[RMDB]
RNA sequence: GGGAACGACUCGAGUAGAGUCGAAAAACGACUACGAGGAGAAAAUCGGAAAACAUGGUUUGUGGACAACGAACAUCCAUAUGUGUCAUUUAACUACCAUGGAUCCUUCGUGACUGAUGAGGUGACAUACCUAACACAGAUUCGUCUGUGUUAGGUAAAAAGAAACAACAACAACAAC
Reactivity to DMS in 0.01 (KOAc 150mM, MgCl2 10mM, bicine 150mM(pH8.5), 24C), signal-to-noise 9, nucleotides 027 to 126: a140c070g010a070c080u010a120c040g020a080g020g010a110g000a070a060a140a100u010c090g000g000a070a060a070a180c030a010u000g000g010u000u010u000g020u000g010g010a050c120a060a060c130g000a080a070c150a070u010c140c090a050u010a050u010g010u000g000u010c050a100u000u000u000a080a070c060u000a020c020c010a020u000g000g000a150u000c040c020u000u010c050g010u000g000a130c070u000g020a070u010g010a120g000g010u010g000a060c120a150
Reactivity to 2A3 in 0.01 (KOAc 150mM, MgCl2 10mM, bicine 150mM(pH8.5), 24C), signal-to-noise 6, nucleotides 027 to 126: a000c020g030a000c020u080a020c070g030a000g110g020a060g060a090a130a040a110u150c070g030g040a010a060a040a020c010a010u010g010g050u150u170u120g060u070g060g010a010c030a110a030c150g070a070a020c030a070u050c060c030a030u090a040u280g060u010g010u010c000a010u080u120u060a050a050c040u030a010c000c000a010u010g010g020a030u000c000c000u030u050c030g010u020g030a020c020u020g040a070u090g040a070g080g030u050g020a000c010a040

The record gives the reactivity of an RNA of 177 nucleotides to DMS and 2A3. For 2A3, 10,041 sequencing reads were counted. Values are in units of 0.01, from 0 to 300, in steps of 10. The DMS profile rests on 15,326 reads.